[RMDB]
RNA sequence: GGGAACGACUCGAGUAGAGUCGAAAAUGGCGUCCGAGCUGAUAAUAAUGCGUCGGGUGAUUGAUUUGCCACAUGUCGGAGGCGCCGUCAAUCGUGAGCGUGAAUCGUUUUGAACGCAUGGAAUAGAUAAUAUGGUCCGAUUCGUCGGACCAUAUUAAAAAGAAACAACAACAACAAC
Reactivity to 2A3 in 0.01 (KOAc 150mM, MgCl2 10mM, bicine 150mM(pH8.5), 24C), signal-to-noise 6, nucleotides 027 to 126: u070g050g010c020g020u010c020c010g020a020g000c060u050g080a090u090a210a090u140a110a090u180g020c010g080u020c020g030g000g030u040g030a040u060u040g050a040u040u030u210g010c020c000a020c010a040u120g070u080c060g070g030a090g020g100c070g010c020c000g030u020c010a030a100u040c050g020u030g100a120g010c010g000u040g070a010a030u060c010g020u030u020u020u180g070a080a010c020g000c030a020u020g020g030a150a080u090a140g070a040
Reactivity to DMS in 0.01 (KOAc 150mM, MgCl2 10mM, bicine 150mM(pH8.5), 24C), signal-to-noise 5, nucleotides 027 to 126: u010g000g000c020g010u010c010c010g030a130g020c030u040g010a090u030a090a110u020a130a060u020g010c040g010u010c050g000g010g020u030g000a050u010u000g000a050u020u030u020g010c010c020a070c090a090u030g000u020c090g000g000a150g000g000c070g030c040c080g000u000c030a050a040u010c060g020u030g000a130g020c040g000u000g000a060a060u010c030g010u000u000u020u020g020a080a050c030g010c040a040u000g000g020a110a060u020a080g000a220